[RMDB]
RNA sequence: GGGAACGACUCGAGUAGAGUCGAAAAAAGGCGUGUCAGUGUCAUUGCUACUCGAAUGCAUUUUAAUCCGAUUGAGUAUCUCACGCCGUAUUCGGCCGACUUUUCCGGUUGGAAACCUACGACACUGCAUGGGCGAGGAGUUCGCUCCUCGCCCAUGAAAAGAAACAACAACAACAAC
Reactivity to DMS in 0.01 (KOAc 150mM, MgCl2 10mM, bicine 150mM(pH8.5), 24C), signal-to-noise 1, nucleotides 027 to 126: a010a090g000g000c010g000u040g000u030c030a000g000u020g010u000c040a190u130u010g000c050u000a010c030u000c000g000a120a050u030g010c220a010u000u010u060u000a200a050u030c290c040g080a120u000u020g000a040g000u000a080u000c000u000c050a010c060g000c000c010g060u020a080u010u000c010g010g000c000c060g020a200c270u020u000u020u050c160c030g020g030u010u040g030g000a030a000a080c050c020u020a010c140g000a040c000a000c040u020g030
Reactivity to 2A3 in 0.01 (KOAc 150mM, MgCl2 10mM, bicine 150mM(pH8.5), 24C), signal-to-noise 2, nucleotides 027 to 126: a000a000g080g010c040g010u090g070u120c010a020g000u000g030u010c020a050u040u120g060c040u000a060c020u000c030g120a060a110u100g070c150a180u080u060u130u250a160a130u080c080c050g100a060u000u100g020a000g000u000a050u000c060u000c040a010c030g000c000c000g000u000a030u000u030c010g000g040c000c000g010a110c060u140u040u170u050c170c000g010g000u000u000g100g020a010a080a060c000c000u050a050c100g020a000c000a000c000u020g000
Annotation:
This 177-nucleotide RNA was probed chemically with DMS and 2A3. The reactions ran in a buffer of 150 mM KOAc, 10 mM MgCl2 and 150 mM bicine (pH 8.5), at 24 C. The data come from the RNA Mapping Database (RMDB), library OK1LIB. For DMS, 1,384 sequencing reads were counted. For DMS the reverse transcriptase was MarathonRT.